[RMDB]
RNA sequence: GGGAACGACUCGAGUAGAGUCGAAAAAGUUAUGAGUUCGCUCAUAACUACAGCGAAAGGCGCUCGGACCCCCAGUCCGCCGAAGGCAUCCCAGCCUGUCCAAGUUGGUAUAUUUCGAUAUACCAAAUACCACCCUUGGAUUCGUCCAAGGGUGGUAAAAAGAAACAACAACAACAAC
Reactivity to DMS in 0.01 (KOAc 150mM, MgCl2 10mM, bicine 150mM(pH8.5), 24C), signal-to-noise 1, nucleotides 027 to 126: a000g000u000u000a000u000g000a020g060u020u040c260g040c000u000c000a010u000a000a010c020u010a070c150a070g020c110g010a070a070a140g010g000c000g000c040u000c020g010g000a300c060c030c010c000c030a250g000u020c060c030g060c040c010g000a080a010g000g030c040a090u010c010c020c000a150g000c000c010u000g040u010c090c140a080a130g000u000u000g000g010u000a010u000a010u010u000u020c100g010a020u000a010u000a000c000c000a010a020a090